[RMDB]
The data come from the RNA Mapping Database (RMDB), library M2PK90. Structure probing data (DMS) for a 177-nucleotide construct. The RNA was probed in 150 mM KOAc, 10 mM MgCl2 and 150 mM bicine (pH 8.5) at 24 C. Reactivities are given for positions 27 through 126. For DMS, 592 sequencing reads were counted.

RNA sequence: GGGAACGACUCGAGUAGAGUCGAAAAAAAGUGUACGAAAGAACAAAGAAGCAAUCAAACCGAGUAGUGAAAUGAUGGCUUCAGUCGAAAAUGGGCAAACACUACAGACGGAGCCAAAGGCAAUUAAUAUCCAUACGCAGUUCGCUGCGUAUGGAUAAAAAGAAACAACAACAACAAC
Reactivity to DMS in 0.01 (KOAc 150mM, MgCl2 10mM, bicine 150mM(pH8.5), 24C), signal-to-noise 1, nucleotides 027 to 126: a040a020a050g030u010g000u000a080c060g040a050a090a050g010a080a020c080a090a140a120g000a070a060g020c030a040a060u010c010a090a080a100c200c050g060a170g000u000a040g020u000g000a060a040a060u010g000a070u000g000g000c000u000u020c000a060g050u000c040g000a000a010a300a130u000g000g020g000c090a000a050a060c140a000c070u000a050c120a110g000a050c010g000g000a040g020c020c000a000a040a060g000g010c190a080a050u020u000a060a030